[RMDB]
The record gives the reactivity of an RNA of 177 nucleotides to 2A3. The RNA was probed in 150 mM KOAc, 10 mM MgCl2 and 150 mM bicine (pH 8.5) at 24 C. Values are in units of 0.01, from 0 to 300, in steps of 10. 2A3 adducts were read by reverse transcription with SuperScript II with manganese. Values cover nucleotides 27 to 126.
RNA sequence: GGGAACGACUCGAGUAGAGUCGAAAAAUCGUGAGUUAAGGUCCAUGCAAAUGGUUUGAGUGCGGUAGUGUCCUAGUUCCUGUGCGCUGUGCGAAGGUGGGCGCUUCUUACGAUCACUGGUCAAAAAGGGAGAAUGGAUGUUCGCAUCCAUUCUCCCAAAAGAAACAACAACAACAAC
Reactivity to 2A3 in 0.01 (KOAc 150mM, MgCl2 10mM, bicine 150mM(pH8.5), 24C), signal-to-noise 1, nucleotides 027 to 126: a000u040c000g000u000g000a000g000u050u180a000a000g100g000u000c000c000a010u120g150c000a000a000a170u060g090g150u240u140u200g080a050g100u110g000c080g000g020u080a110g000u030g000u180c000c030u000a010g070u070u040c000c070u040g090u150g040c070g000c030u020g060u020g040c020g000a000a000g190g000u070g000g000g000c150g030c040u000u010c000u000u050a000c000g080a000u000c030a000c180u010g000g040u190c050a070a090a090a020a000